[RMDB]
RNA sequence: GGGAACGACUCGAGUAGAGUCGAAAACGGGGUUGGCCGGAACGUACUCGACGGCGGGGGUGAUGAGCGGACGCUCACCGUAGACCGCGGGCUGAUACGGGACGGCGGGCGUCACGACGCGGGUACCGUACCCCCUAAGAUUCGUCUUAGGGGGUACAAAAGAAACAACAACAACAAC
Reactivity to DMS in 0.01 (KOAc 150mM, MgCl2 10mM, bicine 150mM(pH8.5), 24C), signal-to-noise 4, nucleotides 027 to 126: c120g000g000g010g020u000u010g000g010c040c020g000g010a130a140c120g010u010a030c100u000c040g010a090c040g020g000c050g010g000g000g010g000u000g010a090u010g000a100g020c020g020g000a060c060g010c000u000c010a020c010c000g000u000a090g010a150c010c010g010c070g010g000g020c170u000g000a130u010a060c000g000g000g020a110c020g010g020c050g000g000g010c020g000u010c040a070c060g010a060c080g010c040g000g000g000u000a070c100c210
Reactivity to 2A3 in 0.01 (KOAc 150mM, MgCl2 10mM, bicine 150mM(pH8.5), 24C), signal-to-noise 2, nucleotides 027 to 126: c020g000g000g010g100u130u220g120g000c020c010g030g020a040a040c030g000u050a030c040u030c070g040a040c030g060g040c060g000g000g000g000g010u120g010a170u050g030a060g020c070g030g060a020c040g000c010u000c000a000c010c000g010u030a050g130a160c000c020g010c000g020g120g000c070u110g010a040u030a160c000g000g040g040a010c000g000g000c010g000g000g000c020g030u030c030a060c140g020a000c000g030c080g030g000g000u030a050c000c050